This 177-nucleotide RNA was probed chemically with DMS.
RNA sequence: GGGAACGACUCGAGUAGAGUCGAAAAGGAACACGACCACUUCAAGGGGCUUGCCGUCAUUGGUGUAGCUGGUGCGGUCGACGACCAGUACCGGCGAACCCACCGCCAGACCCAACGCGUCGGCUACAUACUAGCGCUUGUUCGCAAGCGCUAGUAUAAAAGAAACAACAACAACAAC
Reactivity to DMS in 0.01 (KOAc 150mM, MgCl2 10mM, bicine 150mM(pH8.5), 24C), signal-to-noise 2, nucleotides 027 to 126: g010g010a110a070c110a070c030g000a030c070c030a050c090u060u000c100a090a120g010g000g090g020c030u020u020g020c010c010g000u010c200a180u000u030g030g030u000g010u000a240g020c020u010g030g000u000g020c050g000g000u000c010g000a150c180g010a120c010c010a110g040u000a020c020c010g020g000c000g000a020a110c300c020c030a060c230c030g000c060c030a060g000a090c020c020c020a050a090c090g020c120g010u000c010g000g020c020u000a080c190
Conditions: 150 mM KOAc, 10 mM MgCl2 and 150 mM bicine (pH 8.5), 24 C. DMS adducts were read by reverse transcription with MarathonRT.